The record gives the reactivity of an RNA of 177 nucleotides to 2A3 and DMS. Conditions: 150 mM KOAc, 10 mM MgCl2 and 150 mM bicine (pH 8.5), 24 C. 2A3 adducts were read by reverse transcription with SuperScript II with manganese. The data come from the RNA Mapping Database (RMDB), libraries RFM100 and RFMREP. DMS adducts were read by reverse transcription with MarathonRT.
[RMDB]
RNA sequence: GGGAACGACUCGAGUAGAGUCGAAAAUACACCGAAAGGUGGCGUCAAUCUCUUAAACCUAUCCUUAGUUCGGAUUGAGGGCUGGAACUCGCCCUCAUGAAGAUGGAAUCCGUAGUAAUCGCAUUUCGUAGUGUACACGUUUCGACGUGUACACUACAAAAGAAACAACAACAACAAC
Reactivity to 2A3 in 0.01 (KOAc 150mM, MgCl2 10mM, bicine 150mM(pH8.5), 24C), signal-to-noise 9, nucleotides 027 to 126: u040a000c010a020c000c000g050a050a030a010g020g010u020g010g020c010g050u070c040a070a120u030c030u010c000u090u180a060a090a090c010c020u040a060u110c020c010u100u080a050g070u090u040c010g000g000a000u000u000g010a000g000g020g000c020u080g080g110a120a090c060u080c130g000c000c000c000u000c000a000u010g000a000a010g000a000u030g010g020a030a050u020c040c040g040u060a020g040u040a090a090u120c060g020c110a110u060u060u090c070
Reactivity to DMS in 0.01 (KOAc 150mM, MgCl2 10mM, bicine 150mM(pH8.5), 24C), signal-to-noise 4, nucleotides 027 to 126: u030a110c040a030c000c000g010a110a080a130g000g020u000g000g010c060g020u000c100a110a100u010c060u000c040u000u000a060a090a100c050c030u000a030u010c030c020u010u030a110g020u020u020c020g010g010a130u000u010g000a010g000g000g040c030u000g010g020a150a110c190u020c170g000c000c010c010u000c000a020u000g010a300a110g000a040u010g010g000a120a040u010c050c030g000u010a040g010u020a060a070u010c060g010c150a120u000u010u010c100